[RMDB]
RNA sequence: GGGAACGACUCGAGUAGAGUCGAAAAGUAUAUUCUGUUGAUUUGAGGUGGAGAGUUCUGUAGAUGUCUAUUAGGUCUGCUUGGUGCAGAGCUGAGUUCAAGUCCUGGAUAUCCUUGUUAACCUUCUGUCUGGUUCAUCUGACUAAUGUUGACAGUGAUAUACCUCUCGGUUCGCCGAGAGGUAUAUAAAAGAAACAACAACAACAAC
Reactivity to DMS in 0.01 (KOAc 150mM, MgCl2 10mM, bicine 150mM(pH8.5), 24C), signal-to-noise 1, nucleotides 027 to 156: g000u000a100u000a060u000u000c010u000g010u000u010g010a060u000u000u010g030a070g000g020u040g040g010a050g030a140g010u000u000c030u000g030u000a060g010a050u010g010u010c090u010a180u000u000a020g030g000u000c010u000g000c040u000u000g000g020u000g040c070a080g020a120g030c050u000g010a120g030u020u010c030a080a070g010u000c010c010u000g000g000a100u020a080u000c040c010u000u000g020u000u010a020a060c030c050u000u020c070u010g000u000c000u000g010g030u000u000c040a060u010c040u010g000a070c060u000a050a080u000g010u010u000g020a060c000a080g030u020g000
Reactivity to 2A3 in 0.01 (KOAc 150mM, MgCl2 10mM, bicine 150mM(pH8.5), 24C), signal-to-noise 1, nucleotides 027 to 156: g040u030a110u020a010u210u110c050u020g010u060u030g060a060u060u050u120g050a030g000g010u110g070g050a080g010a000g040u160u030c020u010g030u020a050g040a090u070g020u050c010u020a130u040u080a060g050g040u000c010u030g040c010u110u100g100g070u210g000c030a020g010a020g110c030u040g020a010g080u080u030c070a060a000g000u020c010c020u030g030g050a000u040a010u020c010c000u020u030g000u020u040a070a130c020c000u040u060c040u080g030u030c020u050g010g010u090u060c050a110u020c070u030g030a080c030u030a030a060u040g030u040u050g010a020c010a020g030u020g020